An RNA of 177 nucleotides, treated with 2A3 and read out base by base. For 2A3 the reverse transcriptase was SuperScript II with manganese. 2A3 is a SHAPE reagent: it acylates the 2'-hydroxyl of flexible nucleotides of all four kinds. The 2A3 profile rests on 1,062 reads.
[RMDB]
RNA sequence: GGGAACGACUCGAGUAGAGUCGAAAACAUGCUACAGAGUACAGAGAGUAUAUGGAAGCAUAUAAUCUUGUCUCUGCAUCAGGUUUCCGCCUUUGGUGUUAUAAGACCUUUGAUAUUUAUAAUCUCUCGAUUGUAUUGAGUUCGCUCAAUACAAUCGAAAAGAAACAACAACAACAAC
Reactivity to 2A3 in 0.01 (KOAc 150mM, MgCl2 10mM, bicine 150mM(pH8.5), 24C), signal-to-noise 2, nucleotides 027 to 126: c010a010u030g000c010u020a030c000a030g010a000g020u090a040c060a000g220a010g000a000g150u010a010u000a000u010g020g040a100a020g130c000a000u000a000u010a020a030u000c000u010u020g020u040c000u000c000u000g010c000a030u000c010a010g020g000u010u050u000c060c050g020c020c030u090u080u100g080g000u020g020u090u110a150u030a170a050g010a060c000c000u060u110u090g110a130u140a170u130u180u040a150u020a150a140u050c020u010c000u000